Source: RMDB library TTRDES, as collected in RNAgym. Chemical mapping of a 177-nucleotide RNA with DMS and 2A3. 2A3 adducts were read by reverse transcription with SuperScript II with manganese. The reactions ran in a buffer of 150 mM KOAc, 10 mM MgCl2 and 150 mM bicine (pH 8.5), at 24 C. The 2A3 profile rests on 9,703 reads. For DMS the reverse transcriptase was MarathonRT. Reactivities are given for positions 27 through 126.

RNA sequence: GGGAACGACUCGAGUAGAGUCGAAAAGAUAUGGAUUGACCAUUGUUCAACAGCUAGGGUCGGAAACGACCCUAGACAUGAACGUGGCAAUCCUAAGUCAAAAGGUAGUAAGUUCGCUUACUACCAACAGAAAUGAAGAGUUCGCUCUUCAUUUCUGAAAAGAAACAACAACAACAAC
Reactivity to DMS in 0.01 (KOAc 150mM, MgCl2 10mM, bicine 150mM(pH8.5), 24C), signal-to-noise 5, nucleotides 027 to 126: g010a040u010a300u000g000g000a030u000u000g000a230c000c000a020u010u020g020u000u000c010a030a110c300a170g000c020u000a000g010g000g030u000c000g020g000a090a090a260c000g000a010c000c000c000u000a000g000a010c120a200u000g010a020a000c000g010u000g000g000c010a010a000u000c000c000u000a020a130g010u000c020a060a070a140a120g000g000u000a000g000u010a000a000g010u000u020c300g020c000u000u000a000c000u000a000c000c010a050a100
Reactivity to 2A3 in 0.01 (KOAc 150mM, MgCl2 10mM, bicine 150mM(pH8.5), 24C), signal-to-noise 5, nucleotides 027 to 126: g010a000u090a030u170g030g010a020u040u060g230a300c020c010a050u100u300g010u030u040c050a130a110c040a230g060c000u000a000g030g000g000u000c020g040g020a090a090a020c010g010a000c040c000c010u010a000g000a010c000a030u110g000a020a000c000g000u000g000g000c000a000a000u000c000c000u000a050a040g040u000c050a000a020a160a030g010g000u000a010g010u000a000a020g010u040u180c280g000c210u000u010a000c000u010a010c010c000a000a000